An RNA of 207 nucleotides, treated with 2A3 and read out base by base. The 2A3 profile rests on 819 reads. Reactivities are given for positions 27 through 156.
[RMDB]
RNA sequence: GGGAACGACUCGAGUAGAGUCGAAAAACCUUUGUGCUUGGGAGCCUAAGGUAGGCGUUUGACGUCUCGCCCAUUGGGCGAGACCGAGCCUACCGAUGGGCGUUGAUCAAGCACUCUGGUAAACAGAGCGUAUCAGCUUCGGCUGAUACGCUCUGAAACAUUUGCAUGGAUUCGUCCAUGCAAAUGUAAAAGAAACAACAACAACAAC
Reactivity to 2A3 in 0.01 (KOAc 150mM, MgCl2 10mM, bicine 150mM(pH8.5), 24C), signal-to-noise 1, nucleotides 027 to 156: a000c000c000u000u020u010g000u000g000c000u000u000g000g020g010a020g000c000c010u050a060a030g000g020u000a000g000g000c090g300u240u300u300g150a190c060g000u060c000u010c000g000c100c020c210a270u270u300g020g000g000c020g000a050g000a010c020c020g010a010g000c120c120u130a000c140c030g050a040u110g000g000g000c110g030u030u010g000a000u010c000a000a000g000c040a000c000u000c000u000g000g020u030a010a050a000c010a000g000a000g030c000g030u010a000u000c010a020g030c020u060u020c190g030g000c040u000g000a000u000a000c040g000c010u030c000u000g010a000a000